RNA sequence: GGGAACGACUCGAGUAGAGUCGAAAAUUGCCUACCUAAGUCGACAGAUAUGGGGGUGUAGCCGUGGCAAUAAGGCCACUGGGGUGAGUAAAGAAAUGCACUCGCCUCCCACACUUGGAAAGGUGAUCGACUGUACGAUUUUCGAAUCGUACAGUCGAAAAGAAACAACAACAACAAC
Reactivity to 2A3 in 0.01 (KOAc 150mM, MgCl2 10mM, bicine 150mM(pH8.5), 24C), signal-to-noise 4, nucleotides 027 to 126: u110u060g030c020c040u190a300c210c000u010a020a000g020u000c000g060a120c110a190g020a040u020a040u090g010g000g000g010g000u020g080u040a030g030c010c010g000u010g010g000c020a100a200u140a300a100g150g000c000c000a000c050u050g010g000g010g000u010g000a010g010u040a000a020a000g030a000a010a000u050g010c030a000c020u000c000g010c000c010u010c000c000c000a020c000a000c010u030u080g060g070a070a110a030g050g000u020g010a060u050